Conditions: 150 mM KOAc, 10 mM MgCl2 and 150 mM bicine (pH 8.5), 24 C. This 177-nucleotide RNA was probed chemically with DMS and 2A3. DMS adducts were read by reverse transcription with MarathonRT. For 2A3 the reverse transcriptase was SuperScript II with manganese.
[RMDB]
RNA sequence: GGGAACGACUCGAGUAGAGUCGAAAAGAAACGCAAGGCCGCUGACCGACGGGAUAUUGUGGGGCUUACCACAGGGGACGCGGCGUUAUCACUUGCCUUUUAAGCCGACCGUCUGGGCUGCAUACAACCUGUACAUCUUGUUCGCAAGAUGUACAGGAAAAGAAACAACAACAACAAC
Reactivity to DMS in 0.01 (KOAc 150mM, MgCl2 10mM, bicine 150mM(pH8.5), 24C), signal-to-noise 6, nucleotides 027 to 126: g010a040a060a070c300g000c030a030a050g000g020c020c010g000c000u000g000a300c030c010g020a040c080g000g010g000a150u060a060u030u010g020u000g010g010g000g010c180u040u040a110c000c010a010c020a110g000g010g000g000a300c300g010c030g010g000c010g000u030u040a080u060c160a300c010u010u000g000c000c050u000u010u000u010a070a080g000c030c010g000a090c030c030g010u000c020u030g020g000g010c030u010g000c100a080u010a090c160a100a140
Reactivity to 2A3 in 0.01 (KOAc 150mM, MgCl2 10mM, bicine 150mM(pH8.5), 24C), signal-to-noise 6, nucleotides 027 to 126: g020a000a070a010c100g000c020a020a030g170g000c000c010g020c030u040g050a050c010c010g050a040c060g050g040g040a100u120a090u200u100g030u030g000g000g020g120c100u060u110a060c010c010a020c010a030g020g010g000g000a010c040g000c020g010g020c000g030u040u060a040u050c010a010c080u000u020g010c000c000u040u170u030u070a030a010g010c010c010g030a070c000c010g030u000c010u040g020g020g020c030u020g010c040a080u140a120c040a060a050
Source: RMDB libraries RFM100 and RFMREP, as collected in RNAgym.